An RNA of 177 nucleotides, treated with DMS and read out base by base. It was measured as part of the RMDB library TTRDES. For DMS, 1,902 sequencing reads were counted.
[RMDB]
RNA sequence: GGGAACGACUCGAGUAGAGUCGAAAAGAUAUGGAUCCCACGCAGCAACAGCGUAUGGGUCGGAAACGACCCUGUACGACAUGCUGGUGGGAUCCUAAGUCAAACGGUUGGGGUUCGCCCCAACCGACUUAUCCGCUUUCUUCGGAAAGCGGAUAAGAAAAGAAACAACAACAACAAC
Reactivity to DMS in 0.01 (KOAc 150mM, MgCl2 10mM, bicine 150mM(pH8.5), 24C), signal-to-noise 1, nucleotides 027 to 126: g020a030u000a030u010g000g010a020u000c000c000c000a000c000g020c000a000g030c000a170a090c200a170g020c000g000u000a000u000g010g010g010u000c010g020g010a000a010a050c010g000a020c000c000c000u010g020u000a010c000g000a030c070a170u010g040c010u000g000g020u010g000g000g000a010u010c000c000u010a000a040g000u010c020a250a130a290c040g010g000u000u010g000g000g010g030u000u010c300g030c000c000c000c000a000a000c000c000g020a030